RNA sequence: GGGAACGACUCGAGUAGAGUCGAAAAGGCAGUCCUCCCAGGAGCAAGUAAGGAGGGGAUGAGUUGAGGUUCAACCCUCCUAAGGACGCUUAGUAGAAUCCCCCUAAAUACAAAAGCUGGGUUAUUGUCUAAGACAGACAUUCGUGUCUGUCUUAGAAAAAGAAACAACAACAACAAC
Reactivity to DMS in 0.01 (KOAc 150mM, MgCl2 10mM, bicine 150mM(pH8.5), 24C), signal-to-noise 5, nucleotides 027 to 126: g010g020c100a080g010u000c030c010u000c010c000c010a080g010g010a080g010c080a090a160g000u030a130a090g010g000a030g000g010g000g000a130u000g010a050g000u010u010g010a120g010g020u000u000c030a030a130c000c020c000u000c000c020u010a030a040g000g010a130c110g010c010u000u000a090g020u020a060g000a190a120u010c020c000c010c070c070u000a090a090a110u030a050c080a060a070a130a080g010c010u000g000g000g000u020u010a070u010u000g010
Reactivity to 2A3 in 0.01 (KOAc 150mM, MgCl2 10mM, bicine 150mM(pH8.5), 24C), signal-to-noise 6, nucleotides 027 to 126: g050g000c040a050g030u010c000c010u040c010c010c010a010g050g030a070g060c110a110a050g050u230a060a020g010g010a020g010g010g070g010a200u090g010a040g030u060u110g090a090g020g210u030u030c010a010a040c000c000c000u000c000c000u000a010a000g010g010a000c020g000c020u030u020a030g030u020a010g120a160a110u070c010c010c000c000c020u080a090a110a070u180a060c090a030a080a010a040g020c010u020g010g000g000u010u070a110u090u140g020